[RMDB]
RNA sequence: GGGAACGACUCGAGUAGAGUCGAAAACGACUCAAUACGUCCCCGUCGUACAGAAUGGUAACAUAUCUCUCCAAAUAUCUGAGCUUGGGUAUACGGGGAAACCCAACCCCUUGGGAAGAUUGGGAAUAAAAGGAGCGAUCCUUCGGGAUCGCUCCAAGUAUCGUACAUGGUUCGCCAUGUACGAUACAAAAGAAACAACAACAACAAC
Reactivity to 2A3 in 0.01 (KOAc 150mM, MgCl2 10mM, bicine 150mM(pH8.5), 24C), signal-to-noise 2, nucleotides 027 to 156: c030g040a000c000u030c060a090a050u090a180c030g080u040c000c000c030c040g060u060c030g010u110a050c060a130g070a080a160u110g040g060u130a150a050c060a080u120a210u100c040u010c010u000c080c010a060a080a150u140a080u040c030u010g000a010g090c020u020u040g020g000g000u050a010u000a030c020g000g000g020g000a010a010a010c000c000c000a020a020c000c000c000c010u010u020g000g020g020a020a010g010a020u010u020g000g000g010a020a040u120a100a120a060a090g000g000a000g000c000g000a000u000c000c020u030u060c220g030g000g030a000u000c000g000c000u000c000c000a000a000
About this RNA:
The record gives the reactivity of an RNA of 207 nucleotides to 2A3. It was measured as part of the RMDB library M2RFPK. The 2A3 profile rests on 885 reads.